[RMDB]
RNA sequence: GGGAACGACUCGAGUAGAGUCGAAAAAACAUUGAAGAUUCAGUGUGAACUGGAUUGAAGUUGCCUUUAGUGCAGAUCUUGAUGGUAGUAGCAAAUAUUCAAAAGAAUUUACUUUGAAGGCCGAAGUAGAAUACUCCUUUUUCGAAAGGAGUAUUCUAAAAGAAACAACAACAACAAC
Reactivity to DMS in 0.01 (KOAc 150mM, MgCl2 10mM, bicine 150mM(pH8.5), 24C), signal-to-noise 4, nucleotides 027 to 126: a080a020c070a070u010u000g000a170a180g000a050u020u000c000a020g000u000g000u030g000a150a050c000u000g010g010a010u000u000g020a080a120g000u000u000g010c020c000u000u010u000a040g010u010g020c090a040g000a020u000c010u000u000g010a160u010g000g010u010a020g000u010a080g020c160a040a090a090u000a040u000u020c050a030a070a050a050g000a060a050u000u020u010a050c030u000u010u000g000a020a020g010g000c010c050g020a060a070g020u020
Reactivity to 2A3 in 0.01 (KOAc 150mM, MgCl2 10mM, bicine 150mM(pH8.5), 24C), signal-to-noise 3, nucleotides 027 to 126: a000a000c110a060u140u100g030a080a040g000a060u020u010c000a000g030u000g020u070g130a050a030c010u000g000g000a020u000u040g040a050a020g070u130u070g000c010c000u030u070u070a080g010u070g060c030a010g030a160u020c000u060u120g040a110u130g050g070u060a080g030u020a020g080c050a010a070a150u160a100u030u130c000a020a040a000a100g040a010a020u070u060u030a060c010u090u060u100g020a010a040g000g000c040c040g040a030a000g020u070
The record gives the reactivity of an RNA of 177 nucleotides to DMS and 2A3.